[RMDB]
RNA sequence: GGGAACGACUCGAGUAGAGUCGAAAACAAACAAAACCUCAAACCUAAUACAGUAAUAAUAGGCUGGGGGUGGUGGCUCAUGACUAUUAUUAAUCUCAGCACUUUGGUAGGCUAAUACAGAAGAAUUGCUUGAGCCCAGAGUUCGAGACCAGCCUGAGACGGUAAUAGCAUUCGUGCUAUUACCGUCAAAAGAAACAACAACAACAAC
Reactivity to 2A3 in 0.01 (KOAc 150mM, MgCl2 10mM, bicine 150mM(pH8.5), 24C), signal-to-noise 2, nucleotides 027 to 156: c040a020a170a020c020a000a060a110a110c040c010u070c040a030a060a120c020c020u100a130a100u180a120c030a030g080u110a060a180u030a250a040u090a080g010g000c010u030g010g000g000g040g000u020g020g120u100g000g000c000u000c020a010u020g070a090c060u090a000u180u000a020u050u130a190a180u020c060u030c050a000g000c040a060c090u180u090u090g140g050u170a110g060g010c000u030a050a030u070a120c070a050g180a140a020g030a070a040u040u030g020c030u050u050g000a010g000c000c000c000a030g000a000g050u130u230c060g000a000g030a060c000c000a000g010c000c000u020g000a010